[RMDB]
RNA sequence: GGGAACGACUCGAGUAGAGUCGAAAAUGGAAAGUUACAAGGUGGGGUGAUCAACAUGCUUGCGCUUCUGACAUUGUUAUUUAUGAAGAUGGAUCUCCUUUUCAAAGGAUUCUGGUUGGUGGUGGUGAGUUUGGAUUUGCUUCCAAUGGUAAUGCAACAUAAAUGCGGGAUUCGUCCCGCAUUUAUGAAAAGAAACAACAACAACAAC
Reactivity to 2A3 in 0.01 (KOAc 150mM, MgCl2 10mM, bicine 150mM(pH8.5), 24C), signal-to-noise 2, nucleotides 027 to 156: u080g020g000a100a060a010g050u120u070a080c040a030a060g060g030u010g000g040g000g000u010g020a070u070c020a030a060c010a070u130g040c060u080u120g010c010g020c050u040u050c020u040g020a020c000a100u120u100g090u100u130a110u060u200u060a100u120g020a030a010g060a040u100g000g030a030u020c020u000c060c030u040u040u070u120c180a110a030a000g070g020a000u090u000c040u130g030g040u050u050g000g000u000g040g010u020g000g030u000g020a020g020u040u080u040g010g010a030u000u000u130g030c030u000u000c080c030a090a050u120g020g000u110a110a060u180g020c020a000a000
Reactivity to DMS in 0.01 (KOAc 150mM, MgCl2 10mM, bicine 150mM(pH8.5), 24C), signal-to-noise 1, nucleotides 027 to 156: u000g010g000a080a080a140g040u010u000a040c060a050a090g020g040u000g010g040g020g030u020g010a070u000c020a050a050c060a080u000g000c050u010u000g000c070g000c040u010u010c010u010g000a090c090a090u000u010g010u010u010a070u000u010u000a110u060g010a040a070g010a100u000g020g020a100u000c050u010c000c020u000u000u030u000c100a070a080a120g000g020a110u000u000c020u000g000g010u000u000g020g020u000g000g010u000g030g030u000g000a080g000u010u000u000g020g000a130u000u000u000g010c040u000u000c020c020a050a090u010g020g000u000a080a100u000g020c040a050a240
Overview:
The record gives the reactivity of an RNA of 207 nucleotides to 2A3 and DMS. Conditions: 150 mM KOAc, 10 mM MgCl2 and 150 mM bicine (pH 8.5), 24 C. The data come from the RNA Mapping Database (RMDB), library OK3TST.